The record gives the reactivity of an RNA of 207 nucleotides to 2A3 and DMS. For DMS the reverse transcriptase was MarathonRT. The data come from the RNA Mapping Database (RMDB), library OK3TST.
RNA sequence: GGGAACGACUCGAGUAGAGUCGAAAAGGCUCAAAGCAUGCAGUUCACUAUUGCUUAUGAUCCAAAGUCUGCAUCUCUGCCGAUCCUUAAGGACCUGACAAAGCGCGAAGCUCGAUCCAUGAUCCGUGUCAUUGUCCCCGGAAUGGUUGAGCUUAUCUCAAGGGUCUUAGUUCGCUAAGACCCUUGAAAAAGAAACAACAACAACAAC
Reactivity to 2A3 in 0.01 (KOAc 150mM, MgCl2 10mM, bicine 150mM(pH8.5), 24C), signal-to-noise 2, nucleotides 027 to 156: g030g020c020u030c110a160a070a000g050c040a010u020g000c010a030g030u180u120c030a020c080u120a180u180u080g030c040u170u240a110u220g060a080u040c040c000a020a120a000g020u020c010u000g000c010a010u020c020u020c020u070g000c020c000g010a020u030c000c000u000u010a120a030g050g040a060c000c040u020g010a030c090a080a260a040g060c140g000c020g110a020a000g010c020u010c000g030a120u130c020c010a070u070g040a040u030c000c010g020u030g050u130c060a130u130u160g090u180c000c010c000c020g020g020a010a000u030g030g000u000u020g000a000g000c000u010u030a030u020c040
Reactivity to DMS in 0.01 (KOAc 150mM, MgCl2 10mM, bicine 150mM(pH8.5), 24C), signal-to-noise 2, nucleotides 027 to 156: g010g000c040u010c030a030a100a180g010c080a110u010g000c020a070g000u000u000c070a080c100u000a110u000u000g000c040u010u010a180u000g000a090u010c040c050a110a160a080g010u020c020u010g000c040a040u000c000u000c060u000g000c040c000g010a050u000c000c050u000u000a180a150g030g000a010c000c010u000g050a080c020a010a070a090g000c180g060c100g000a030a050g020c010u000c020g010a050u000c080c020a080u010g010a120u000c000c010g020u000g040u000c060a170u000u000g020u010c020c030c050c000g020g000a130a130u000g020g020u020u000g000a110g020c000u000u000a030u020c070